[RMDB]
RNA sequence: GGGAACGACUCGAGUAGAGUCGAAAACCGGGGCAACUCUUUCCAGAAUCCAGGGGGCUCCGAGCGCAACGGGCCGCGGUGCUCUGGAGUAGAGGCUCUGCCCUCGAAACACCAUCGAUCGUCCCUGCAGCCUUCGUCCCUCCGGCUCUUCUGUUGAACAACUAUCUUUGUUCGCAAAGAUAGUUGUAAAAGAAACAACAACAACAAC
Reactivity to 2A3 in 0.01 (KOAc 150mM, MgCl2 10mM, bicine 150mM(pH8.5), 24C), signal-to-noise 3, nucleotides 027 to 156: c020c000g000g010g010g040c100a120a070c080u040c040u160u110u030c050c010a040g040a030a050u300c000c010a020g010g000g000g000g000c030u010c070c020g010a010g000c050g000c020a050a060c030g000g000g000c010c000g060c000g000g000u000g000c010u000c000u020g030g000a000g010u000a000g000a000g000g000c010u070c140u230g050c030c000c000u000c000g000a010a010a010c010a010c180c000a010u000c010g130a290u060c000g020u010c000c000c000u010g000c030a100g000c010c000u020u030c060g300u300c000c000c000u020c000c010g000g000c000u000c000u020u000c000u000g080u100u120g050a040
Reactivity to DMS in 0.01 (KOAc 150mM, MgCl2 10mM, bicine 150mM(pH8.5), 24C), signal-to-noise 1, nucleotides 027 to 156: c010c030g010g000g000g010c120a110a110c090u000c030u000u020u000c080c020a060g020a090a050u030c020c000a090g070g060g040g020g060c020u010c030c000g000a030g000c080g020c030a180a100c130g030g030g110c100c040g040c020g020g030u000g000c090u010c010u000g140g010a200g030u000a070g010a080g010g040c040u010c220u000g050c140c000c000u010c010g000a250a200a140c010a010c080c030a050u010c000g020a120u020c000g000u000c020c010c000u000g040c000a300g010c010c030u020u000c000g030u010c000c000c010u010c000c030g000g000c050u000c040u000u010c030u010g020u030u010g000a200
Chemical mapping of a 207-nucleotide RNA with 2A3 and DMS. It was measured as part of the RMDB library VIROID. Reactivities are given for positions 27 through 156. The RNA was probed in 150 mM KOAc, 10 mM MgCl2 and 150 mM bicine (pH 8.5) at 24 C.